[RMDB]
RNA sequence: GGGAACGACUCGAGUAGAGUCGAAAAAAAAUGGUUAGCUGUUAAUGAAGAACAGGAAUACAUACCAAGUAAGGAUCUUUUAAAUUUAAGAAAUAAGCUUUCAAUUAGCAGUGACAAUACGGAAAGACAUUAUGAUUAUCUUCGGAUAAUCAUAAUGAAAAGAAACAACAACAACAAC
Reactivity to DMS in 0.01 (KOAc 150mM, MgCl2 10mM, bicine 150mM(pH8.5), 24C), signal-to-noise 4, nucleotides 027 to 126: a080a080a080a070u010g010g000u010u010a100g030c010u000g010u000u000a030a030u000g000a100a070g000a060a080c130a120g020g000a100a070u000a080c090a090u010a160c100c040a080a100g010u020a070a110g010g000a100u000c000u000u000u010u010a040a060a130u020u000u000a050a030g010a050a070a090u000a110a100g010c050u000u000u010c030a050a060u000u000a020g010c010a040g020u000g010a060c080a050a060u010a040c140g010g010a040a050a070g010a170
Reactivity to 2A3 in 0.01 (KOAc 150mM, MgCl2 10mM, bicine 150mM(pH8.5), 24C), signal-to-noise 3, nucleotides 027 to 126: a000a000a000a000u080g020g000u050u010a050g050c000u010g000u030u030a010a000u050g050a030a060g010a060a070c060a110g000g130a060a020u140a080c020a030u110a130c000c020a040a020g020u030a080a050g080g040a050u000c020u000u180u090u100a140a300a260u220u260u070a070a090g030a020a120a030u130a070a040g030c010u060u050u100c030a080a120u010u040a010g000c040a000g010u000g040a020c010a000a080u080a060c030g040g060a150a000a020g030a020